[RMDB]
RNA sequence: GGGAACGACUCGAGUAGAGUCGAAAAGAUAUGGAUUGUGGACAUGCUAUACCUUCGGAAACGAAGGGAUAGCAACAGCCAUGUCCUAAGUCAAAGUCCACUGAAUGCUUCGGCAUUCAGUGGACAAGCAGUCCAUCAGGUUCGCCUGAUGGACUGCAAAAGAAACAACAACAACAAC
Reactivity to 2A3 in 0.01 (KOAc 150mM, MgCl2 10mM, bicine 150mM(pH8.5), 24C), signal-to-noise 1, nucleotides 027 to 126: g050a030u090a020u120g010g010a030u170u300g050u040g050g040a020c070a070u070g040c000u000a000u010a020c000c000u000u000c000g020g080a050a140a060c020g010a020a000g020g000g010a000u000a000g000c000a000a010c010a000g010c010c000a020u000g010u020c000c040u050a180a030g050u090c070a250a040a000g000u000c000c000a000c000u000g000a030a010u000g010c010u090u120c300g100g000c000a000u000u000c000a000g020u010g060g000a010c000a000a000